Background:
This 207-nucleotide RNA was probed chemically with DMS and 2A3. Source: RMDB library RNAMAK, as collected in RNAgym. The 2A3 profile rests on 9,185 reads. Conditions: 150 mM KOAc, 10 mM MgCl2 and 150 mM bicine (pH 8.5), 24 C.

[RMDB]
RNA sequence: GGGAACGACUCGAGUAGAGUCGAAAAGGGGUCUUAAAUGAAGCGAGGACAUAGAGGUGGACUGAAGCCUCCACGGUCCACUACCCACCUAUGUCUCCCCACCGCUUCAGUUUAAGACGGAGGCACCCAAACAUGAUGAGGUUCGCCUCAUCAUGAAGAAAGUUUAACGAUUCGUCGUUAAACUUUCAAAAGAAACAACAACAACAAC
Reactivity to DMS in 0.01 (KOAc 150mM, MgCl2 10mM, bicine 150mM(pH8.5), 24C), signal-to-noise 3, nucleotides 027 to 156: g010g010g060g060u000c020u010u000a030a010a050u000g040a010a080g060c010g010a300g010g010a040c020a050u010a070g000a190g000g030u000g000g010a110c030u020g010a040a090g030c010c010u010c010c020a300c050g000g020u010c030c020a030c020u000a040c070c020c070a300c110c010u010a020u010g000u010c010u010c300c050c010c080a300c070c020g000c020u000u000c000a050g000u000u010u000a040a000g010a040c040g020g000a020g040g040c030a070c040c020c030a140a090a260c000a020u000g000a020u000g010a040g000g020u000u010c300g000c020c010u000c000a000u010c010a000u010g000a040a160
Reactivity to 2A3 in 0.01 (KOAc 150mM, MgCl2 10mM, bicine 150mM(pH8.5), 24C), signal-to-noise 3, nucleotides 027 to 156: g020g000g010g000u000c000u000u020a030a030a020u020g000a000a000g000c010g000a000g010g010a000c000a000u000a000g010a010g050g000u010g000g000a000c000u030g040a130a020g020c000c000u010c000c000a000c010g000g000u000c000c010a000c010u030a030c050c060c020a040c010c000u000a000u000g000u000c010u020c040c030c000c000a020c010c010g000c000u000u000c000a080g010u020u010u010a010a010g010a010c090g000g000a000g000g000c010a040c000c000c000a030a090a020c010a000u010g000a000u000g000a000g010g040u100u140c240g130c050c000u000c000a010u010c000a000u000g010a030a020